[RMDB]
RNA sequence: GGGAACGACUCGAGUAGAGUCGAAAAAAAAGCUAUUAAUGUUUUGAGAGGGUUCAGGAAAGAGAUUAGAAGGAUGCUGAACGUCUUGAAUAGGAGACGCAGAUCUGCAGGCAUGAUCAUUAUGCUGAUUUUAGUGAUAUUUCGAUAUCACUAAAAUAAAAGAAACAACAACAACAAC
Reactivity to 2A3 in 0.01 (KOAc 150mM, MgCl2 10mM, bicine 150mM(pH8.5), 24C), signal-to-noise 5, nucleotides 027 to 126: a000a000a000a010g090c120u130a130u220u080a150a070u130g020u020u090u090u100g050a060g000a010g000g040g010u030u040c030a000g000g070a090a030a020g070a010g010a050u050u110a070g030a080a010g050g010a010u050g130c020u020g010a110a030c010g010u000c000u040u080g090a200a110u130a190g120g060a020g010a000c010g010c010a010g010a070u010c020u050g000c030a020g030g000c010a010u060g010a040u080c030a020u040u160a040u100g040c030u050g040
Reactivity to DMS in 0.01 (KOAc 150mM, MgCl2 10mM, bicine 150mM(pH8.5), 24C), signal-to-noise 9, nucleotides 027 to 126: a060a050a050a050g010c040u010a140u010u000a100a070u010g010u000u000u000u000g000a110g010a080g000g010g010u000u000c060a040g000g010a050a050a060g010a080g000a080u010u000a080g000a110a100g010g010a050u000g020c020u000g010a080a100c040g000u000c010u000u000g000a080a100u010a120g010g000a030g000a020c030g020c060a040g000a050u000c030u000g010c110a080g000g000c050a030u000g000a060u010c090a060u000u000a040u000g010c040u000g000
Source: RMDB library OK2TRN, as collected in RNAgym. Structure probing data (2A3 and DMS) for a 177-nucleotide construct. The reactions ran in a buffer of 150 mM KOAc, 10 mM MgCl2 and 150 mM bicine (pH 8.5), at 24 C.